[RMDB]
RNA sequence: GGGAACGACUCGAGUAGAGUCGAAAACCUCGCUGCCUAAGCGACGGCUGGUCUGUCAGACCGGGAGUGCCCUCGGCCCGGAUCCUGGCAUCAGCUAGAGGGACCCACCCACGGGUUCGGUCGCGGGACCUGUGGGGACAUCAAACAGCGACUGGGAGAUACGUCACAAGUUCGCUUGUGACGUAUCAAAAGAAACAACAACAACAAC
Reactivity to 2A3 in 0.01 (KOAc 150mM, MgCl2 10mM, bicine 150mM(pH8.5), 24C), signal-to-noise 1, nucleotides 027 to 156: c010c010u010c010g040c000u100g030c010c160u170a140a030g020c010g080a050c060g040g000c000u020g010g060u070c050u030g000u010c020a010g010a080c040c010g010g000g000a000g010u080g110c030c030c000u060c000g160g020c000c000c000g000g060a120u110c000c060u000g000g000c010a030u030c030a060g010c020u040a080g000a000g010g020g030a080c020c000c000a010c010c010c000a000c010g000g000g000u000u000c000g000g000u000c010g000c000g000g000g010a000c000c000u020g000u000g000g020g000g010a010c020a040u260c180a130a010a020c010a010g000c000g020a000c020u040g080g040g000a080

The data come from the RNA Mapping Database (RMDB), library ARCHII. The record gives the reactivity of an RNA of 207 nucleotides to 2A3. The reactions ran in a buffer of 150 mM KOAc, 10 mM MgCl2 and 150 mM bicine (pH 8.5), at 24 C. The 2A3 profile rests on 1,555 reads. High 2A3 reactivity points to a flexible backbone, as in loops and unpaired stretches.